Description
Structure probing data (2A3 and DMS) for a 207-nucleotide construct. For DMS the reverse transcriptase was MarathonRT. Source: RMDB library M2RFPK, as collected in RNAgym. For 2A3, 2,651 sequencing reads were counted. The reactions ran in a buffer of 150 mM KOAc, 10 mM MgCl2 and 150 mM bicine (pH 8.5), at 24 C.

[RMDB]
RNA sequence: GGGAACGACUCGAGUAGAGUCGAAAAAGUUAGGUUCGCUAUGGUGCAACUCUUUAAGGCAAUAACGAACUAAUUCUAAGCAAGUAAUUGAGAAAUGCCAGGGUCACUAUCUAGCCAUAAUAGUGCUGUAAGUGACUUAGAUUCGUCUAAGUCACAACUUCCCCUUCUGUUUCGACAGAAGGGGAAGAAAAGAAACAACAACAACAAC
Reactivity to 2A3 in 0.01 (KOAc 150mM, MgCl2 10mM, bicine 150mM(pH8.5), 24C), signal-to-noise 3, nucleotides 027 to 156: a000g080u060u040a050g020g020u010u000c030g000c040u030a010u050g080g010u060g050c070a090a100c060u090c070u070u160u180a110a030g050g000c010a040a070u070a130a030c050g010a010a010c010u030a000a030u070u110c060u140a070a010g080c050a070a000g050u100a070a120u140u120g040a020g040a090a110a020u050g010c020c000a020g010g000g000u030c000a000c030u020a040u140c030u030a020g040c000c010a030u060a130a050u040a070g080u060g030c070u040g040u100a170a050g000u010g000a000c010u000u000a000g000a000u010u030c120g000u010c150u000a000a000g000u000c000a000c000a010a000
Reactivity to DMS in 0.01 (KOAc 150mM, MgCl2 10mM, bicine 150mM(pH8.5), 24C), signal-to-noise 2, nucleotides 027 to 156: a060g020u010u000a060g030g000u000u000c040g060c000u000a050u010g030g030u020g000c040a150a140c100u000c060u010u000u000a070a070g020g010c010a050a060u000a030a080c030g010a040a030c020u000a020a060u000u000c070u000a100a130g050c040a060a140g020u000a040a130u000u000g010a080g020a050a100a080u000g000c020c030a080g010g020g000u000c030a070c030u010a020u000c070u010a080g010c030c040a140u000a050a120u010a070g030u010g030c010u000g020u010a060a160g000u000g000a020c010u000u000a000g010a060u030u000c300g010u000c010u000a010a000g010u000c010a010c010a010a100